[RMDB]
RNA sequence: GGGAACGACUCGAGUAGAGUCGAAAAUUUGAUAGUUCAUUAACACCACUUUUACUCAACUCAGUUCUUGGAAUUAGAAGAUUCUUCAUGGAGGAUUGGUGGGUUGGUGAAGAGAUGCUUGAAAAUCCGUGUCAAUUGUGUUCGCACAAUUGACACGAAAAGAAACAACAACAACAAC
Reactivity to DMS in 0.01 (KOAc 150mM, MgCl2 10mM, bicine 150mM(pH8.5), 24C), signal-to-noise 1, nucleotides 027 to 126: u020u000u020g010a200u000a040g000u000u010c020a070u010u010a090a180c040a110c000c100a020c150u000u010u020u000a040c000u000c050a070a160c090u040c070a060g000u000u000c020u020u020g000g010a100a020u030u040a130g040a010a120g000a100u050u020c040u000u030c200a140u120g020g000a010g020g000a020u000u010g000g020u010g010g000g000u000u010g000g000u000g050a010a090g000a120g000a070u000g050c060u000u000g000a080a000a090a090u000c090
Reactivity to 2A3 in 0.01 (KOAc 150mM, MgCl2 10mM, bicine 150mM(pH8.5), 24C), signal-to-noise 4, nucleotides 027 to 126: u230u100u140g170a160u110a070g050u000u100c010a010u020u010a060a000c070a230c080c030a030c040u040u000u100u260a060c000u020c070a070a090c050u020c170a060g070u190u080c100u090u200g140g050a060a030u150u090a200g080a180a010g100a070u150u010c020u100u100c050a050u130g110g000a010g000g040a020u040u000g020g000u000g020g010g000u000u010g010g050u000g000a010a000g020a000g020a000u240g050c050u040u030g100a010a040a050a030u030c070